[RMDB]
RNA sequence: GGGAACGACUCGAGUAGAGUCGAAAAAGCAGGUGGUACGCCACCUGCAAAAAGUGGCAUAUGCGACGGCCAUGGACUGGUUCAUAGCCGUCUGUUAUGCCUUUAGAGGCGACUACGGUCGCCUCAAUCGUACGUGAGAUUUCGAUCUCACGUACGAAAAAGAAACAACAACAACAAC
Reactivity to 2A3 in 0.01 (KOAc 150mM, MgCl2 10mM, bicine 150mM(pH8.5), 24C), signal-to-noise 3, nucleotides 027 to 126: a010g010c010a000g000g000u010g000g010u040a030c170g070c020c010a000c000c000u000g000c010a010a000a000a000a000g170u140g000g000c030a010u060a050u190g060c020g000a000c010g010g010c000c010a010u010g000g000a020c090u300g290g000u050u050c000a010u000a020g010c000c010g000u010c000u000g000u000u010a000u010g010c010c000u000u070u040a010g000a000g000g000c020g010a000c010u040a020c220g130g000u000c000g000c000c000u000c000a000a000
Reactivity to DMS in 0.01 (KOAc 150mM, MgCl2 10mM, bicine 150mM(pH8.5), 24C), signal-to-noise 2, nucleotides 027 to 126: a120g010c000a030g000g020u030g000g010u020a090c300g020c060c000a010c000c000u020g000c010a010a000a050a110a110g020u000g010g020c020a000u020a030u040g060c200g020a020c020g000g000c000c030a020u000g000g000a010c140u050g040g030u000u000c000a000u000a080g020c000c000g000u040c000u000g000u000u000a010u000g000c000c000u010u050u040a080g030a000g000g020c000g000a020c010u000a140c180g020g000u010c000g000c000c000u000c000a010a020
Chemical mapping of a 177-nucleotide RNA with 2A3 and DMS. DMS adducts were read by reverse transcription with MarathonRT. For 2A3 the reverse transcriptase was SuperScript II with manganese. The RNA was probed in 150 mM KOAc, 10 mM MgCl2 and 150 mM bicine (pH 8.5) at 24 C.